[RMDB]
RNA sequence: GGGAACGACUCGAGUAGAGUCGAAAAACAGUGAAGACGAGCGGUCUUCCAGAUAGUCGUCCUAAAAGUAUAGUGUUCGGCGCUUUUCGCUGCGAUAUACGUUAUAUUGAACCGGCAGACUCGGGUGCGCUUCACCAUAAUUCGUUAUGGUGAAGCGAAAAGAAACAACAACAACAAC
Reactivity to DMS in 0.01 (KOAc 150mM, MgCl2 10mM, bicine 150mM(pH8.5), 24C), signal-to-noise 3, nucleotides 027 to 126: a130c080a130g020u010g010a030a040g000a010c010g010a230g030c180g010g010u000c010u000u000c000c040a170g010a140u010a060g000u000c020g000u000c010c010u000a040a090a130a090g010u000a020u000a030g010u000g000u000u000c020g010g000c020g010c300u010u000u010u000c030g010c030u000g020c070g010a090u000a040u000a020c040g000u000u000a060u010a080u000u010g010a070a090c140c060g010g000c060a080g000a060c030u000c040g010g000g000u000g000
Reactivity to 2A3 in 0.01 (KOAc 150mM, MgCl2 10mM, bicine 150mM(pH8.5), 24C), signal-to-noise 3, nucleotides 027 to 126: a010c110a030g040u110g140a010a010g000a010c050g060a070g240c220g200g000u030c000u010u000c010c000a000g020a040u110a040g050u030c010g020u000c010c020u010a070a100a020a010g060u030a020u050a090g040u060g020u130u130c050g050g000c000g010c140u150u120u070u250c040g000c000u040g060c030g080a020u040a010u010a130c060g020u090u040a100u010a030u130u150g020a040a030c010c000g000g000c050a010g030a090c000u000c040g050g030g050u070g000
The record gives the reactivity of an RNA of 177 nucleotides to DMS and 2A3. 2A3 adducts were read by reverse transcription with SuperScript II with manganese. The data come from the RNA Mapping Database (RMDB), library OK2TRN. The DMS profile rests on 3,085 reads. High 2A3 reactivity points to a flexible backbone, as in loops and unpaired stretches.